RNA sequence: GGGAACGACUCGAGUAGAGUCGAAAAGGCCAGGUAUUCGUACCUGGCCAAAAAGCGUACUACGAGUGGAUGAACUACCUCUGGUGUCCCAAAUAGGACACCAAGGAGGCAUCGUAACAUCUCGUAUCGCAAAAAGCAAGUCUUUCGAGACUUGCAAUAUUAUGCGAAGUUUCGACUUCGCAUAAUAAAAAGAAACAACAACAACAAC
Reactivity to 2A3 in 0.01 (KOAc 150mM, MgCl2 10mM, bicine 150mM(pH8.5), 24C), signal-to-noise 2, nucleotides 027 to 156: g030g000c020c000a000g000g000u000a000u020u060c090g000u000a030c000c010u010g020g080c000c010a010a010a000a000a010g020c030g040u080a040c040u000a000c070g000a000g000u030g010g030a020u020g010a180a300c040u280a300c020c000u150c200u010g000g000u000g000u000c020c020c000a070a250a190u300a120g000g000a000c000a000c020c000a000a000g040g000a010g000g000c000a000u000c000g090u120a120a050c030a300u100c020u000c000g010u000a020u290c000g000c020a020a000a130a000a000g010c000a000a000g010u010c000u010u090u230c220g110a020g010a000c000u000u000g000c000a000a000
Reactivity to DMS in 0.01 (KOAc 150mM, MgCl2 10mM, bicine 150mM(pH8.5), 24C), signal-to-noise 2, nucleotides 027 to 156: g030g000c000c000a010g020g030u000a030u000u020c180g060u010a010c000c000u000g060g000c010c000a010a030a000a070a050g000c030g040u000a070c120u000a010c010g010a070g020u000g020g020a180u000g000a080a110c030u000a060c010c000u000c030u020g020g010u000g030u000c000c000c020a030a110a140u020a060g020g000a030c000a010c000c000a010a040g060g020a020g020g030c000a040u000c040g000u010a120a180c030a080u000c000u000c010g020u000a060u000c010g020c000a070a050a090a100a160g020c020a020a010g000u010c000u000u000u000c250g000a040g020a010c000u000u010g000c000a020a020
The record gives the reactivity of an RNA of 207 nucleotides to 2A3 and DMS. 2A3 adducts were read by reverse transcription with SuperScript II with manganese. It was measured as part of the RMDB library RNAMAK. For DMS the reverse transcriptase was MarathonRT. The DMS profile rests on 4,891 reads. The reactions ran in a buffer of 150 mM KOAc, 10 mM MgCl2 and 150 mM bicine (pH 8.5), at 24 C. Values cover nucleotides 27 to 156. In probing experiments dimethyl sulfate is read out at A N1 and C N3, which are open when not base-paired. The 2A3 profile rests on 1,452 reads.